[RMDB]
RNA sequence: GGGAACGACUCGAGUAGAGUCGAAAAGGGGCAAACUGGGACUUUCACCGAUGACUGGGCUCAUCAUCCGGGUGUGUUCGUCCAAGCCGGAGAGCCGAGUAGAGAUCCACGCGCGAACUGCGCACGGAGAAGCCCUAGCGAGGUGACGUAGGACCCGCUUAUGAUGUAUCUUCGGAUACAUCAUAAGAAAAGAAACAACAACAACAAC
Reactivity to DMS in 0.01 (KOAc 150mM, MgCl2 10mM, bicine 150mM(pH8.5), 24C), signal-to-noise 3, nucleotides 027 to 156: g000g020g050g050c040a070a050a070c050u010g010g030g000a300c040u000u010u000c040a060c000c010g010a090u010g000a100c030u040g040g020g010c010u000c040a120u000c040a200u020c000c030g010g020g070u000g020u050g030u010u020c090g000u000c030c040a130a140g010c010c020g000g000a100g020a090g030c030c030g030a150g030u000a140g000a140g000a120u010c000c030a100c040g000c020g010c000g010a060a110c090u010g020c010g010c000a030c020g000g000a120g000a100a130g020c030c010c000u000a060g010c020g020a180g000g000u010g000a050c080g000u000a080g020g010a150c010c010c000g000
Reactivity to 2A3 in 0.01 (KOAc 150mM, MgCl2 10mM, bicine 150mM(pH8.5), 24C), signal-to-noise 4, nucleotides 027 to 156: g030g000g010g010c070a060a070a040c080u070g000g010g060a030c020u060u060u010c040a010c040c010g090a160u130g070a070c040u040g000g000g020c020u010c060a170u040c010a060u000c020c010g010g020g010u020g000u010g010u040u060c040g050u050c080c040a040a020g080c020c030g010g010a070g010a000g060c010c040g030a050g050u170a050g020a000g000a030u020c030c020a020c080g020c000g000c000g010a120a040c050u160g020c030g000c010a000c010g010g000a040g010a030a000g010c010c000c020u020a010g000c010g010a050g000g000u010g010a010c050g040u050a070g030g060a070c010c000c000g000

Source: RMDB library RSTRND, as collected in RNAgym.
Structure probing data (DMS and 2A3) for a 207-nucleotide construct.
The DMS profile rests on 5,970 reads.
For DMS the reverse transcriptase was MarathonRT.